[RMDB]
RNA sequence: GGGAACGACUCGAGUAGAGUCGAAAAACACGAGAAGCCUAUGCCUCGCAAGUAACUGUGGAUGCUUGCGCCGCUGCAGUUCAGGCCACUUGGCGUUGUGAUGCAUUUGAUGAAGAAACUUUCAUUCCUAUAUAUACGGCUUCGGCCGUAUAUAUAGAAAAGAAACAACAACAACAAC
Reactivity to DMS in 0.01 (KOAc 150mM, MgCl2 10mM, bicine 150mM(pH8.5), 24C), signal-to-noise 5, nucleotides 027 to 126: a110c080a110c120g000a100g010a140a150g010c030c030u000a040u010g000c000c040u000c030g020c030a020a080g010u010a010a040c040u010g020u010g000g010a070u010g010c030u000u010g010c220g000c050c080g010c010u000g000c040a030g010u000u000c040a120g000g030c020c020a150c190u010u010g010g010c020g020u010u000g020u010g010a050u000g010c040a040u000u010u000g010a090u000g010a090a070g010a100a070a110c170u010u010u000c020a080u000u000c050
Reactivity to 2A3 in 0.01 (KOAc 150mM, MgCl2 10mM, bicine 150mM(pH8.5), 24C), signal-to-noise 3, nucleotides 027 to 126: a000c050a010c040g110a090g070a220a020g060c000c020u030a010u070g000c000c020u020c030g040c040a080a070g030u130a030a020c020u030g000u050g060g040a050u050g010c070u140u210g030c090g000c090c010g000c020u000g000c010a000g000u020u010c020a020g070g000c000c000a110c130u120u210g010g000c020g040u040u020g000u010g030a010u030g000c020a030u030u070u170g090a110u100g050a020a070g060a120a170a040c030u060u070u030c030a070u040u040c010
The record gives the reactivity of an RNA of 177 nucleotides to DMS and 2A3. Values cover nucleotides 27 to 126. The data come from the RNA Mapping Database (RMDB), library OK2TST. Conditions: 150 mM KOAc, 10 mM MgCl2 and 150 mM bicine (pH 8.5), 24 C.